[RMDB]
The data come from the RNA Mapping Database (RMDB), library RNAMAK. This 207-nucleotide RNA was probed chemically with DMS and 2A3. The RNA was probed in 150 mM KOAc, 10 mM MgCl2 and 150 mM bicine (pH 8.5) at 24 C. DMS adducts were read by reverse transcription with MarathonRT.
RNA sequence: GGGAACGACUCGAGUAGAGUCGAAAAUCUAGACCUUCGGGUCUAGAAAAAAGAUAUGGAUGCAGGGAGAGCCUGGUUCGGAAACGAACCUGCGUAGGAUAGCUCGAGGAUCUAAAGAGUGCAUCCUAAGUCAAAAAGCACUACUUCGGUAGUGCAAGAAAGGAUUAAACUUCGGUUUAAUCCUUUCAAAAGAAACAACAACAACAAC
Reactivity to DMS in 0.01 (KOAc 150mM, MgCl2 10mM, bicine 150mM(pH8.5), 24C), signal-to-noise 1, nucleotides 027 to 156: u000c000u000a000g010a000c010c010u000u040c300g080g040g030u000c000u030a010g000a000a020a130a070a100a170g020a100u000a220u020g000g000a040u000g020c000a090g000g000g030a290g000a100g020c010c000u000g020g010u000u010c010g000g000a160a050a270c010g010a020a040c050c000u000g020c060g040u000a100g000g020a240u000a120g050c020u000c030g000a090g010g010a150u000c160u010a090a060a210g010a130g010u000g010c000a020u000c000c030u000a000a110g000u010c000a040a040a060a130a240g010c000a000c020u000a010c000u010u010c190g030g050u000a020g020u000g000c010a000a030
Reactivity to 2A3 in 0.01 (KOAc 150mM, MgCl2 10mM, bicine 150mM(pH8.5), 24C), signal-to-noise 1, nucleotides 027 to 156: u030c000u000a000g010a040c010c030u030u080c300g060g000g000u010c000u010a000g000a000a000a000a000a000a000g010a010u050a020u100g000g010a000u000g000c010a020g070g000g050a100g000a000g070c010c130u020g000g010u010u030c000g000g010a050a030a030c010g000a000a000c000c000u060g020c040g020u060a020g060g060a130u090a110g040c030u030c080g050a050g000g050a020u080c040u170a060a130a050g140a030g050u060g020c000a000u000c000c000u010a040a010g010u000c020a200a050a000a000a050g080c080a000c000u060a000c010u020u080c150g050g000u000a000g000u010g020c000a000a000
2A3 adducts were read by reverse transcription with SuperScript II with manganese. The DMS profile rests on 2,483 reads. Values cover nucleotides 27 to 156.